[RMDB]
RNA sequence: GGGAACGACUCGAGUAGAGUCGAAAAAGUGAGUGGGAGCGCGAAUGUGUGGCUUGAGUGUGCGGGCGUGGGGCGUGCAAGGCGAGCGCGUGUGCCCACCCUGAGCCCCUCCCGCCGCCUACACCUUAGUAUCUACAAGGUUCGCCUUGUAGAUACUAAAAGAAACAACAACAACAAC
Reactivity to DMS in 0.01 (KOAc 150mM, MgCl2 10mM, bicine 150mM(pH8.5), 24C), signal-to-noise 2, nucleotides 027 to 126: a050g010u000g010a090g010u000g000g000g020a080g030c080g040c090g010a070a090u000g020u000g020u030g000g040c080u000u000g010a080g010u000g020u010g030c020g000g040g000c300g030u010g020g000g020g010c040g000u000g020c060a050a070g000g000c070g000a060g000c040g030c140g030u000g010u000g010c000c020c010a030c030c010c010u010g000a120g000c000c010c010c000u000c010c010c000g020c040c010g010c020c050u000a100c110a090c060c060u010u020
Reactivity to 2A3 in 0.01 (KOAc 150mM, MgCl2 10mM, bicine 150mM(pH8.5), 24C), signal-to-noise 2, nucleotides 027 to 126: a000g120u110g090a040g010u040g000g040g030a040g020c040g000c060g140a180a150u110g070u050g060u100g090g000c040u070u070g010a060g090u100g050u150g000c020g000g010g000c090g030u120g000g020g030g030c040g000u030g040c060a060a040g130g000c020g030a020g020c040g000c050g040u230g100u110g160c020c000c000a000c020c000c020u000g020a020g000c000c020c020c000u000c010c000c000g030c000c010g000c010c000u010a040c010a050c030c000u000u020